[RMDB]
RNA sequence: GGGAACGACUCGAGUAGAGUCGAAAACAGAUAGGGGCUUAGGAUAAUGAUUUGUGCUUUAUUGGGGCAGAUUAGUCACAGUGUCACUACUGUCUCUCAAUGUGCCCUGUACAUGUCUCUUCAAUGUCGUCUUAUGUACGUUCGCGUACAUAAGACGAAAAGAAACAACAACAACAAC
Reactivity to DMS in 0.01 (KOAc 150mM, MgCl2 10mM, bicine 150mM(pH8.5), 24C), signal-to-noise 2, nucleotides 027 to 126: c080a080g030a110u040a060g000g010g000g010c050u000u000a080g040g000a040u000a030a090u000g000a120u000u000u010g000u040g030c050u000u000u000a090u020u020g040g000g010g010c000a070g000a030u000u030a100g000u000c110a010c000a070g000u000g000u000c300a060c300u000a000c020u000g010u000c110u000c010u000c150a000a040u000g000u030g010c020c000c010u000g000u040a070c150a130u010g000u020c000u000c060u000u000c080a090a090u030g000u000
Reactivity to 2A3 in 0.01 (KOAc 150mM, MgCl2 10mM, bicine 150mM(pH8.5), 24C), signal-to-noise 6, nucleotides 027 to 126: c030a010g050a050u150a040g020g000g000g020c020u070u090a040g010g080a040u100a160a070u190g080a090u040u090u100g070u080g010c030u170u120u120a060u160u280g010g000g000g000c000a010g000a130u020u030a010g020u040c010a000c020a050g020u020g090u180c060a040c130u130a000c000u030g010u000c000u000c010u030c080a030a030u030g010u010g140c000c000c000u010g030u050a020c040a050u070g030u000c020u010c000u070u030c100a110a170u200g040u060